[RMDB]
RNA sequence: GGGAACGACUCGAGUAGAGUCGAAAAUGUGUGCUCGAGAGCCUCCCUGACCGACAGAGCUUUUAGAUCUUCUGAUCUUUCCCUGGAGGAUAUCGCUUAUGCUUCAAGCGAUUCUCGGAAUAAUUAAGCCGAUUAAAAGAUUCGUCUUUUAAUCGGCAAAAGAAACAACAACAACAAC
Reactivity to DMS in 0.01 (KOAc 150mM, MgCl2 10mM, bicine 150mM(pH8.5), 24C), signal-to-noise 3, nucleotides 027 to 126: u020g010u010g020u000g000c040u000c030g020a100g010a150g000c030c020u000c020c010c050u000g000a090c060c040g000a080c090a080g000a070g010c080u010u000u010u010a020g010a010u000c020u010u020c270u010g010a010u000c020u000u000u000c000c000c000u010g010g000a050g000g010a050u020a030u000c000g010c000u000u000a110u010g010c110u000u010c130a020a020g000c000g010a020u000u000c010u010c020g010g010a140a050u020a070a110u010u010a100a170
Reactivity to 2A3 in 0.01 (KOAc 150mM, MgCl2 10mM, bicine 150mM(pH8.5), 24C), signal-to-noise 2, nucleotides 027 to 126: u130g090u030g040u060g010c020u010c050g090a090g010a040g060c010c020u030c040c010c010u030g030a060c030c000g020a020c020a050g090a000g050c000u050u040u010u020a010g010a020u020c010u250u060c130u300g010a010u000c000u020u000u000c000c000c000u020g060g020a020g020g010a040u080a030u020c010g000c010u050u030a060u250g080c020u120u160c100a020a000g000c000g020a010u030u020c000u010c000g040g060a120a060u190a110a050u240u070a080a050